[RMDB]
RNA sequence: GGGAACGACUCGAGUAGAGUCGAAAAUCGAGAUCACUCGAGAACGAGUGUUCGUGUACGAACGAACUCGUACACGUGUGUUCUCUCACUCGUGAUCACUCGUACGUUCUCACACGAUCGUGUACACUCACGUGAGUGAUCGAGUACGAACGAGUGAGGUUGAGCGAGCGUUCGCGCUCGCUCAACCAAAAGAAACAACAACAACAAC
Reactivity to 2A3 in 0.01 (KOAc 150mM, MgCl2 10mM, bicine 150mM(pH8.5), 24C), signal-to-noise 1, nucleotides 027 to 156: u140c000g030a000g050a090u060c060a000c140u000c000g000a070g070a100a010c090g010a010g030u040g050u140u020c010g000u030g010u020a000c020g000a090a030c070g040a200a080c200u030c020g000u030a030c050a000c040g000u040g020u000g000u000u000c020u000c010u010c020a040c030u030c030g030u060g110a070u060c000a000c000u000c000g030u020a050c030g050u040u000c000u030c000a000c000a000c010g010a060u070c020g050u030g020u060a100c120a030c090u070c010a000c000g050u040g040a040g010u000g020a070u130c080g000a000g000u000a000c000g030a040a000c000g000a000g000u000g010a010